An RNA of 177 nucleotides, treated with DMS and 2A3 and read out base by base. For 2A3 the reverse transcriptase was SuperScript II with manganese. The DMS profile rests on 2,135 reads. For DMS the reverse transcriptase was MarathonRT. The RNA was probed in 150 mM KOAc, 10 mM MgCl2 and 150 mM bicine (pH 8.5) at 24 C. The 2A3 profile rests on 2,335 reads.

[RMDB]
RNA sequence: GGGAACGACUCGAGUAGAGUCGAAAAUGAGGGUGGGCGUGGACACGAAGAUGAUCUGCAGCGCCCAGAAGCGGAUGUGGGAGAUGGGGAAGGCCCUGUCGUAGCAGACGUUCUCGCAGCCCGGCUGGAUGUCACGUUCAUUCGUGAACGUGACAUCAAAAGAAACAACAACAACAAC
Reactivity to DMS in 0.01 (KOAc 150mM, MgCl2 10mM, bicine 150mM(pH8.5), 24C), signal-to-noise 3, nucleotides 027 to 126: u010g010a100g020g010g050u000g020g010g030c000g050u000g010g010a240c050a050c150g010a060a110g000a080u020g020a110u010c020u000g000c050a300g000c060g000c000c000c000a030g000a080a100g000c050g010g000a090u000g010u000g000g010g000a300g000a060u000g010g020g020g020a220a120g010g030c020c010c010u000g000u000c010g010u000a280g010c030a040g000a070c050g010u000u000c040u000c000g010c130a170g020c010c010c000g000g010c110u010g000
Reactivity to 2A3 in 0.01 (KOAc 150mM, MgCl2 10mM, bicine 150mM(pH8.5), 24C), signal-to-noise 2, nucleotides 027 to 126: u180g020a070g010g060g060u110g000g050g000c030g000u100g000g030a110c020a020c110g080a100a060g110a230u200g040a170u020c010u080g050c040a040g020c000g040c000c010c030a010g000a030a000g000c020g030g010a010u010g020u080g040g060g060a180g030a060u030g050g010g010g030a120a300g250g050c020c000c010u000g020u010c020g010u010a000g000c010a000g000a030c020g010u050u030c020u000c020g000c010a010g000c000c010c010g000g060c030u080g130